[RMDB]
RNA sequence: GGGAACGACUCGAGUAGAGUCGAAAAAAUUUUAUAGGCUGUAAGAAAGGUAGGUAGCGUCGUGUUAUUAACGAGUGAACUCAUUGUAGUUUGACUAAUUCCAAUAAGUUUUGAAAACUCCUUUUGACGUAUUUCUCUUUCAGCAAAAAUAACACGAACCCAAUGUUAAUUUCGAUUAACAUUGGGUAAAAGAAACAACAACAACAAC
Reactivity to DMS in 0.01 (KOAc 150mM, MgCl2 10mM, bicine 150mM(pH8.5), 24C), signal-to-noise 2, nucleotides 027 to 156: a110a080u040u020u000u010a140u000a230g000g020c040u000g020u000a080a090g010a050a030a060g000g000u010a030g000g020u000a100g070c010g000u000c000g100u010g000u000u000a060u020u000a000a130c080g000a120g010u020g000a030a020c010u000c010a100u010u010g020u010a020g020u000u000u010g020a180c100u010a030a070u010u000c040c020a060a050u000a040a020g020u000u000u000u020g010a080a060a070a050c020u000c000c020u000u000u020u010g020a070c060g020u000a120u000u000u000c030u000c020u000u000u010c030a070g020c020a010a040a030a030a030u000a010a020c020a030c010g000a060
Reactivity to 2A3 in 0.01 (KOAc 150mM, MgCl2 10mM, bicine 150mM(pH8.5), 24C), signal-to-noise 2, nucleotides 027 to 156: a000a000u300u230u090u060a170u140a030g000g090c000u000g050u080a050a020g060a210a100a000g030g100u180a070g020g020u050a000g030c000g000u020c000g000u020g110u150u070a020u060u030a000a030c030g000a000g020u030g020a010a010c030u000c010a050u010u120g040u060a010g000u000u020u070g060a000c020u070a150a010u160u050c030c000a030a030u040a100a060g030u010u000u170u130g070a070a090a020a050c000u030c010c010u040u020u080u270g070a020c010g040u070a150u040u300u010c050u000c000u020u060u030c000a030g000c020a000a030a090a040a090u080a000a020c010a010c180g000a030
The data come from the RNA Mapping Database (RMDB), library OK3TST.
Structure probing data (DMS and 2A3) for a 207-nucleotide construct.
The RNA was probed in 150 mM KOAc, 10 mM MgCl2 and 150 mM bicine (pH 8.5) at 24 C.
2A3 adducts were read by reverse transcription with SuperScript II with manganese.